[RMDB]
RNA sequence: GGGAACGACUCGAGUAGAGUCGAAAAUGGGGUUGCAGCCGUAGCGCAUCGCAAAGACGCCGAGGUCACCCACGCAACCCACAUCGCACGCUUGGUCACUCGGGGUCCGUGCUAGCGGGCGGCGAACGAGUUCAAUUUACUUCGGUAAAUUGAACUCAAAAGAAACAACAACAACAAC
Reactivity to 2A3 in 0.01 (KOAc 150mM, MgCl2 10mM, bicine 150mM(pH8.5), 24C), signal-to-noise 2, nucleotides 027 to 126: u080g050g010g000g000u010u030g020c040a030g000c020c030g050u070a040g200c040g000c010a070u080c070g000c100a060a100a040g010a030c040g070c090c010g010a010g040g000u110c050a090c050c000c020a000c020g000c020a000a040c010c080c000a010c010a030u130c060g000c040a020c030g030c020u080u130g050g030u100c030a010c100u020c020g020g040g030g000u000c010c010g050u030g000c010u030a050g070c000g030g030g020c000g030g000c030g000a030a010c090
Reactivity to DMS in 0.01 (KOAc 150mM, MgCl2 10mM, bicine 150mM(pH8.5), 24C), signal-to-noise 2, nucleotides 027 to 126: u020g020g000g010g010u000u000g030c000a190g020c020c000g000u020a090g020c020g040c010a130u000c220g000c100a060a100a130g000a030c100g010c010c000g000a050g010g000u010c040a130c060c000c010a110c100g000c010a010a060c010c010c000a070c070a070u000c170g030c030a080c150g020c120u000u030g000g010u010c090a170c010u000c060g000g000g020g040u010c030c160g030u000g000c070u000a040g010c010g000g020g050c040g020g010c000g000a050a140c150